Chemical mapping of a 177-nucleotide RNA with DMS and 2A3.
Reactivities are given for positions 27 through 126.
2A3 adducts were read by reverse transcription with SuperScript II with manganese.
Source: RMDB libraries RFM100 and RFMREP, as collected in RNAgym.
[RMDB]
RNA sequence: GGGAACGACUCGAGUAGAGUCGAAAAUGCAAAGCACGGCACGUAAGCACUCAGAUGCGAAAGUAGGAACUGCGUUAGGCGUCCAGACGCAGGUAGCCCGAAUUUUAUAGCUGAUGAGCGUAGCGCGUGUCAGCGAUGACUUCGGUCAUCGCUGACAAAAAGAAACAACAACAACAAC
Reactivity to DMS in 0.01 (KOAc 150mM, MgCl2 10mM, bicine 150mM(pH8.5), 24C), signal-to-noise 1, nucleotides 027 to 126: u000g100c190a150a040a090g010c110a030c180g020g030c040a000c020g020u000a070a180g000c010a140c070u000c010a010g000a070u000g000c000g000a010a010a040g010u000a300g000g000a120a200c000u000g000c000g010u010u060a090g040g040c030g000u010c000c070a150g030a010c060g010c010a000g010g010u000a270g010c110c000c000g050a140a090u000u000u000u010a110u040a000g020c030u000g040a300u000g000a000g040c030g000u000a080g000c020g000c040g000
Reactivity to 2A3 in 0.01 (KOAc 150mM, MgCl2 10mM, bicine 150mM(pH8.5), 24C), signal-to-noise 1, nucleotides 027 to 126: u080g010c020a030a010a050g200c040a050c050g020g000c000a000c060g010u010a140a000g050c010a000c150u020c080a040g070a020u000g000c020g000a020a000a000g040u040a030g040g000a010a010c000u000g000c000g030u010u030a060g130g000c080g000u160c020c000a000g000a000c000g000c000a000g110g000u040a130g130c010c010c000g000a020a000u180u160u050u060a060u080a000g000c000u040g060a070u000g010a040g000c060g090u000a050g040c020g000c040g000